[RMDB]
RNA sequence: GGGAACGACUCGAGUAGAGUCGAAAACGACGACGAUCCGCGCUGCCCCAACAAGCACGGCUAUGACGCGAUCGACGGCCGCAAGGUCAUGGUGUCGCUCAUCGUCGACCGGGUCGACGAGCUGCAGGGCGACACCGACGUGAAUCUCAUCGCGCUGCUGGAUAGAAAUAUUCGUAUUUCUAUCCAGAAAAGAAACAACAACAACAAC
Reactivity to DMS in 0.01 (KOAc 150mM, MgCl2 10mM, bicine 150mM(pH8.5), 24C), signal-to-noise 2, nucleotides 027 to 156: c040g010a080c010g020a200c100g010a090u010c050c000g010c030g060c010u000g000c060c010c000c040a120a170c090a150a120g000c050a080c020g000g010c100u000a090u000g000a080c000g000c040g020a040u000c080g010a030c070g040g010c020c010g020c100a190a100g030g010u000c020a060u000g040g020u010g040u000c060g000c010u030c000a110u000c020g040u000c010g000a000c020c050g070g030g060u000c000g000a010c010g020a110g020c110u000g030c100a150g000g010g030c000g020a030c010a010c000c000g010a020c030g010u010g000a080a090u000c030u000c040a070u000c000g010c010g010c000u000g000
Reactivity to 2A3 in 0.01 (KOAc 150mM, MgCl2 10mM, bicine 150mM(pH8.5), 24C), signal-to-noise 5, nucleotides 027 to 156: c030g080a010c040g020a000c020g010a040u050c110c060g010c010g010c040u050g020c020c010c030c020a080a120c070a110a030g050c070a050c090g040g000c010u100a080u220g060a080c000g010c010g010a000u020c050g030a040c060g000g000c030c010g030c070a040a050g080g000u030c040a060u250g000g000u000g010u000c000g000c000u000c000a100u010c000g000u010c000g020a010c040c150g300g040g070u030c000g010a000c000g000a000g040c110u210g040c190a150g000g000g000c010g000a000c000a000c000c000g000a020c020g010u040g030a030a050u030c050u020c030a080u040c040g000c020g010c070u080g010